Structure probing data (DMS) for a 177-nucleotide construct.
RNA sequence: GGGAACGACUCGAGUAGAGUCGAAAACUAUUGUGGUUCGCCACAAUAGGCAGGGCUGUUUUUCUCGCUGACUUUCAGCCCCAAACAAAAAAGUCAGCAAAAUUGUACUGCGCUUCGGCGCAGUAAAUCGAUAACGACAAUUCGUUGUCGUUAUCGAAAAAGAAACAACAACAACAAC
Reactivity to DMS in 0.01 (KOAc 150mM, MgCl2 10mM, bicine 150mM(pH8.5), 24C), signal-to-noise 2, nucleotides 027 to 126: c000u010a000u000u000g000u000g010g000u000u020c240g010c000c000a000c000a010a010u000a000g000g020c260a160g000g000g010c000u000g000u000u000u000u000u000c090u000c180g000c010u010g000a000c000u010u000u000c000a000g030c020c000c010c160a010a020a270c050a010a010a010a000a020a010g030u000c000a000g000c000a000a000a050a030u000u020g000u000a000c000u000g000c010g010c010u000u000c190g030g000c000g000c000a000g020u000a000a040a110
Source: RMDB library M2PK50, as collected in RNAgym. DMS adducts were read by reverse transcription with MarathonRT.